[RMDB]
RNA sequence: GGGAACGACUCGAGUAGAGUCGAAAAGAGCACCAUCUGCGUAGGCUUGUGGUUUAAGGCUUGCGCCACCUACGGUCUUGGAUAGCCCCCGCCAGGCAGGGACCCCAAUACCUGUGCAGCGGGCAGACUAGGAAAAUCGAUUCGUCGAUUUUCCUAGAAAAGAAACAACAACAACAAC
Reactivity to DMS in 0.01 (KOAc 150mM, MgCl2 10mM, bicine 150mM(pH8.5), 24C), signal-to-noise 4, nucleotides 027 to 126: g020a120g020c090a070c040c010a060u010c020u000g010c010g020u000a040g000g020c110u000u020g030u010g000g000u020u020u030a110a040g020g000c030u000u020g020c160g000c010c070a080c030c030u000a050c050g000g000u010c030u010u000g010g000a090u020a120g010c020c020c010c010c020g010c000c020a110g020g010c020a030g000g010g010a110c080c020c030c020a090a110u010a120c000c000u000g010u000g000c150a300g000c060g010g020g030c120a050g010a140
Reactivity to 2A3 in 0.01 (KOAc 150mM, MgCl2 10mM, bicine 150mM(pH8.5), 24C), signal-to-noise 7, nucleotides 027 to 126: g060a010g030c050a050c040c020a050u050c030u090g010c020g050u050a020g000g040c050u100u110g070u090g100g130u090u100u200a060a040g040g000c030u060u100g040c070g020c010c010a030c000c000u060a040c040g010g040u050c020u030u060g070g020a090u110a090g010c010c000c000c000c000g000c010c000a060g020g010c010a000g020g010g060a100c000c020c000c010a010a030u090a120c000c000u010g030u040g010c020a010g000c010g010g010g000c020a010g020a030
The record gives the reactivity of an RNA of 177 nucleotides to DMS and 2A3. Values cover nucleotides 27 to 126. The RNA was probed in 150 mM KOAc, 10 mM MgCl2 and 150 mM bicine (pH 8.5) at 24 C. It was measured as part of the RMDB libraries RFM100 and RFMREP.